[RMDB]
RNA sequence: GGGAACGACUCGAGUAGAGUCGAAAAGAUAUGGAAACGAGCUUACGUGUAUGAUUCCGAUAAGCUGCAUUCGGAAACGAAUGACAGCUUUUGACGGAAGAGUACACGUAAGCUCGUUUCCUAAGUCGCAUAUGAAUGCGUUCGCGCAUUCAUAUGCAAAAGAAACAACAACAACAAC
Reactivity to DMS in 0.01 (KOAc 150mM, MgCl2 10mM, bicine 150mM(pH8.5), 24C), signal-to-noise 2, nucleotides 027 to 126: g010a080u000a300u000g030g000a010a010a010c010g030a040g030c000u000u000a000c000g020u000g020u000a000u000g000a300u010u000c000c000g000a160u000a010a000g000c000u000g000c000a000u000u000c000g000g010a080a140a210c000g020a040a010u000g000a100c000a000g000c020u000u000u000u010g010a180c170g000g000a020a000g000a300g000u000a000c000a010c040g000u000a000a000g020c010u000c000g000u000u020u000c000c000u030a000a080g010u000c100
This 177-nucleotide RNA was probed chemically with DMS. For DMS the reverse transcriptase was MarathonRT. Values cover nucleotides 27 to 126. The reactions ran in a buffer of 150 mM KOAc, 10 mM MgCl2 and 150 mM bicine (pH 8.5), at 24 C.